[RMDB]
RNA sequence: GGGAACGACUCGAGUAGAGUCGAAAAGCGCCAGCAGCCCACCCAUAGGUUGCAUAAUGGCAAAGAUGGGCAAAUACGGUCUCGGCUUCAAAUGGGCCCCAGAAUUUCCAUGGAUGCUUCCGAACGCAAAUAACUAUGUAUUCGUACAUAGUUAUUUAAAAGAAACAACAACAACAAC
Reactivity to DMS in 0.01 (KOAc 150mM, MgCl2 10mM, bicine 150mM(pH8.5), 24C), signal-to-noise 9, nucleotides 027 to 126: g010c120g020c040c030a060g010c040a090g000c010c010c030a190c060c030c030a060u020a110g000g010u010u000g010c020a090u010a110a100u020g000g010c050a050a040a060g010a130u010g010g000g000c100a080a080a080u020a090c120g010g000u000c030u010c080g010g000c030u010u010c090a030a070a060u020g000g010g010c040c010c010c020a060g010a130a120u010u000u000c020c010a060u010g000g000a070u000g010c040u000u010c010c020g000a080a100c180g010c160
Reactivity to 2A3 in 0.01 (KOAc 150mM, MgCl2 10mM, bicine 150mM(pH8.5), 24C), signal-to-noise 9, nucleotides 027 to 126: g040c030g020c010c020a010g010c020a010g000c010c000c010a040c000c010c010a060u100a060g080g010u010u010g000c000a020u130a130a100u140g080g000c030a040a030a000g070a030u050g000g000g020c040a060a090a040u160a070c060g020g030u020c040u030c050g050g000c010u080u080c050a060a090a130u130g020g030g010c010c000c000c000a040g060a090a080u050u040u010c010c010a020u050g100g020a030u040g050c000u040u010c010c010g050a070a030c060g010c110